The record gives the reactivity of an RNA of 177 nucleotides to DMS. It was measured as part of the RMDB library OK2TRN.
RNA sequence: GGGAACGACUCGAGUAGAGUCGAAAAUUGCCAGAGGCCAACAUCCAACUGCAUGUGGCAUUCAUCAAUGGUGAUGUGAGUAUUUUGAAUUGGGACGAACAAGAUCAGGAGUUCAAACUGUCGCACGAGUCUGGAAGCAGUUCGCUGCUUCCAGACUAAAAGAAACAACAACAACAAC
Reactivity to DMS in 0.01 (KOAc 150mM, MgCl2 10mM, bicine 150mM(pH8.5), 24C), signal-to-noise 1, nucleotides 027 to 126: u010u010g020c000c030a040g010a120g030g010c040c040a080a070c060a040u010c020c080a140a190c040u030g010c180a000u000g010u010g000g010c010a100u000u000c020a040u000c150a100a160u010g010g030u000g000a040u000g020u000g000a100g010u000a030u000u000u000u000g010a010a110u000u000g060g010g010a040c060g000a110a060c130a100a140g010a110u010c010a120g000g000a080g000u050u000c080a080a080a010c140u020g000u010c060g010c130a100c160g010